[RMDB]
RNA sequence: GGGAACGACUCGAGUAGAGUCGAAAAUCUAUAUUAUUGGUGCUACAAAGCAUUUAGCUGAAAUGGGAACUCGUUCAGUUGAUUGCGUGUAUGAGUUCAAGGAUAAGAUGGAAGUAUUAUCUGAAGACUGCAGCUAAUGAUUCGUCAUUAGCUGCAGAAAAGAAACAACAACAACAAC
Reactivity to 2A3 in 0.01 (KOAc 150mM, MgCl2 10mM, bicine 150mM(pH8.5), 24C), signal-to-noise 2, nucleotides 027 to 126: u010c010u010a130u030a070u300u060a140u140u190g110g000u080g050c000u040a050c060a070a270a090g000c010a010u000u050u040a010g000c010u010g020a010a030a120u170g040g080g070a140a130c120u030c120g030u030u020c040a000g030u000u030g030a050u060u070g030c050g020u070g030u030a050u140g060a070g090u060u060c020a030a030g020g000a020u010a000a030g040a060u080g030g080a030a060g030u040a010u110u010a030u040c040u020g020a060a000g080a070
Reactivity to DMS in 0.01 (KOAc 150mM, MgCl2 10mM, bicine 150mM(pH8.5), 24C), signal-to-noise 2, nucleotides 027 to 126: u000c020u010a050u020a110u010u010a120u010u010g010g010u020g020c020u010a040c060a090a100a180g000c000a010u000u000u000a030g010c000u000g010a010a030a030u010g020g010g010a130a130c160u000c090g010u010u000c020a020g020u000u000g010a020u000u010g000c010g000u010g030u000a060u000g010a030g010u000u000c030a060a190g010g000a010u000a000a020g010a050u000g010g020a100a110g000u010a040u010u010a070u000c020u000g010a100a100g010a140
An RNA of 177 nucleotides, treated with 2A3 and DMS and read out base by base. For DMS the reverse transcriptase was MarathonRT.